[RMDB]
RNA sequence: GGGAACGACUCGAGUAGAGUCGAAAAGGGACUGGCCCGAUGAAGCCCGGCAACCUAACUUUAUUUAAUCGUAAAGUGAAGGUGCUAAUUCCAGCAAAAUGGUGUAUUCCGUUUUGGUAGAUAAGAGAAGCGUGACAUGAGUUCGCUCAUGUCACAAGUAUGAUUAGUGCUUCGGCACUAAUCAUACAAAAGAAACAACAACAACAAC
Reactivity to 2A3 in 0.01 (KOAc 150mM, MgCl2 10mM, bicine 150mM(pH8.5), 24C), signal-to-noise 5, nucleotides 027 to 156: g020g000g010a020c040u020g030g030c020c030c010g020a050u120g050a050a050g050c000c020c000g020g000c020a130a130c000c010u000a000a030c010u020u000u020a030u030u070u090a100a080u110c040g000u000a000a000a000g000u030g110a170a040g000g000u000g000c000u000a010a040u140u020c020c010a010g000c040a060a000a010a020u040g000g010u120g050u200a090u210u060c000c010g010u000u020u040u030g080g020u090a120g040a180u170a230a110g060a040g050a160a050g110c060g060u010g000a000c000a000u000g000a000g030u040u090c180g040c060u000c000a000u000g000u000c000a000c000a000a000
Reactivity to DMS in 0.01 (KOAc 150mM, MgCl2 10mM, bicine 150mM(pH8.5), 24C), signal-to-noise 2, nucleotides 027 to 156: g040g010g010a100c030u010g000g030c040c000c010g030a130u020g040a160a180g000c020c000c050g020g000c000a040a030c000c000u010a160a010c000u000u000u000a010u000u000u020a170a170u000c300g020u000a000a020a010g040u000g000a070a010g000g010u000g000c010u000a090a130u000u010c010c020a080g000c040a000a020a020a030u010g030g000u000g000u010a090u000u000c000c010g020u010u000u000u000g010g020u000a010g000a070u020a080a130g030a140g000a100a140g010c110g010u000g010a020c000a010u010g000a010g030u000u000c300g010c000u000c000a010u000g000u000c000a000c010a020a090
The record gives the reactivity of an RNA of 207 nucleotides to 2A3 and DMS. The 2A3 profile rests on 2,742 reads. 2A3 adducts were read by reverse transcription with SuperScript II with manganese. The RNA was probed in 150 mM KOAc, 10 mM MgCl2 and 150 mM bicine (pH 8.5) at 24 C.